[RMDB]
RNA sequence: GGGAACGACUCGAGUAGAGUCGAAAAGAUUCAACCUAUAGUAGGAUACGCUAGGCACUGCCGUUUGAAGUCUGCCUAGAAGAGAUUAAUCAAACUAGCAUAAUGACGGAUGUCUAUCACCUCCCAUUAUGCGAAACCUAUUGAUAGACUACGCACGCACAAGGACAGUCUUCGGACUGUCCUUGUGAAAAGAAACAACAACAACAAC
Reactivity to 2A3 in 0.01 (KOAc 150mM, MgCl2 10mM, bicine 150mM(pH8.5), 24C), signal-to-noise 2, nucleotides 027 to 156: g060a080u160u110c050a050a050c020c010u110a120u150a280g220u120a050g020g080a020u020a020c000g000c000u000a000g020g000c010a000c010u010g020c060c050g000u000u010u000g000a000a000g030u000c000u000g000c000c000u010a000g000a000a020g020a000g010a040u050u150a000a000u040c000a000a000a000c000u000a020g000c000a000u010a000a040u010g020a060c070g000g010a060u170g020u040c020u000a000u000c010a030c050c030u010c010c000c000a010u000u000a000u000g000c000g000a000a000a000c040c010u130a140u170u050g000a000u000a020g000a010c070u060a080c120g090c030a090c080g010
Conditions: 150 mM KOAc, 10 mM MgCl2 and 150 mM bicine (pH 8.5), 24 C.
Structure probing data (2A3) for a 207-nucleotide construct.
2A3 adducts were read by reverse transcription with SuperScript II with manganese.
2A3 is a SHAPE reagent: it acylates the 2'-hydroxyl of flexible nucleotides of all four kinds.
Values cover nucleotides 27 to 156.